[RMDB]
RNA sequence: GGGAACGACUCGAGUAGAGUCGAAAAGGGGUCACGGACAUGAGCCUUAUUUCUUCGAGGAUCUUACUGAAGCCUCCACGGUAAGGGAGAAGAUUCAGGCUCAACAGCCGUGACGGAGGCACCCAAAUCACCCCGCCAGUUCGCUGGCGGGGUGAAACGCUGUAUUUUAGUUCGCUAAAAUACAGCGAAAAGAAACAACAACAACAAC
Reactivity to 2A3 in 0.01 (KOAc 150mM, MgCl2 10mM, bicine 150mM(pH8.5), 24C), signal-to-noise 2, nucleotides 027 to 156: g020g030g100g010u000c020a000c010g010g000a020c210a300u300g000a020g010c010c000u000u040a070u100u250u050c030u010u000c030g030a200g010g010a000u010c000u000u010a000c000u030g050a160a020g020c000c000u000c000c000a000c010g000g000u000a000a000g010g000g010a010g000a010a010g010a000u010u030c030a010g000g020c010u020c030a060a050c040a020g030c000c000g000u010g000a000c000g000g000a000g000g010c000a040c000c010c000a020a090a040u020c000a000c000c030c000c000g000c030c000a040g020u180u190c280g050c180u000g000g000c000g000g000g000g000u000g000a000a000a000